[RMDB]
RNA sequence: GGGAACGACUCGAGUAGAGUCGAAAAUCUUGUAUCCAUACUUAUAAAAUUAAUGGAUGUAUUAAAUUAGUGGAAAAAAAGACAUGAAGGCUCAGUUACUUUGAUCCCUAGGUACCUAGAGCAAAUGUUUGUCACCUUUAUUUUUCUUCUGCUACAACAAAAUAAUGGAGUUCGCUCCAUUAUUUUGAAAAGAAACAACAACAACAAC
Reactivity to 2A3 in 0.01 (KOAc 150mM, MgCl2 10mM, bicine 150mM(pH8.5), 24C), signal-to-noise 1, nucleotides 027 to 156: u090c080u020u110g010u040a000u010c000c000a070u020a070c030u230u190a110u230a300a160a250a220u180u140a110a020u070g000g010a010u050g000u040a240u160u280a140a140a160u070u040a000g010u020g010g000a000a000a000a000a000a000a000g030a000c000a030u090g020a070a100g080g000c010u000c000a000g000u000u000a000c030u000u020u030g000a150u070c040c000c000u000a010g000g000u000a010c000c000u030a050g000a000g040c000a000a160a110u010g030u020u030u040g050u000c030a080c040c010u050u100u240a110u100u180u080u000u010c040u030u060c010u010g030c000u050a040c050a190a000
The data come from the RNA Mapping Database (RMDB), library OK3TST. An RNA of 207 nucleotides, treated with 2A3 and read out base by base. For 2A3 the reverse transcriptase was SuperScript II with manganese. 2A3 is a SHAPE reagent: it acylates the 2'-hydroxyl of flexible nucleotides of all four kinds. The reactions ran in a buffer of 150 mM KOAc, 10 mM MgCl2 and 150 mM bicine (pH 8.5), at 24 C.